[RMDB]
RNA sequence: GGGAACGACUCGAGUAGAGUCGAAAAGGAACUAUGUUCAGGCAUGAAGCCUCCACGUGCGUGCGAGGGCACCCGGAAACGGCUGAGCAUAGUUCCGAGCUGAAGGAGGCACGGCUCAAAAUAAAAAGGAGCUACAACUGUUCGCAGUUGUAGUUCCAAAAGAAACAACAACAACAAC
Reactivity to 2A3 in 0.01 (KOAc 150mM, MgCl2 10mM, bicine 150mM(pH8.5), 24C), signal-to-noise 9, nucleotides 027 to 126: g000g000a000a000c000u000a000u000g000u000u000c000a000g000g000c000a010u010g050a100a020g000c000c000u000c000c000a040c000g010u010g000c010g000u000g000c030g090a230g030g080g000c000a000c000c000c000g010g010a040a040a020c000g000g000c000u000g000a000g000c000a000u000a000g000u000u000c000c000g000a000g000c000u020g020a120a060g000g000a000g000g000c030a010c010g000g000c000u000c000a080a090a010a010u200a020a070a020a010a010
Reactivity to DMS in 0.01 (KOAc 150mM, MgCl2 10mM, bicine 150mM(pH8.5), 24C), signal-to-noise 5, nucleotides 027 to 126: g010g010a020a000c010u000a000u010g000u010u000c000a000g010g020c010a000u000g000a080a150g020c000c000u000c010c020a300c020g010u000g020c020g040u000g000c000g010a250g010g000g010c000a000c000c000c010g010g000a090a080a190c000g010g000c000u000g000a010g000c010a000u000a000g010u000u000c000c010g000a010g000c010u000g000a100a090g020g020a010g000g000c000a300c010g000g000c000u000c000a140a050a070a110u050a030a090a050a120a060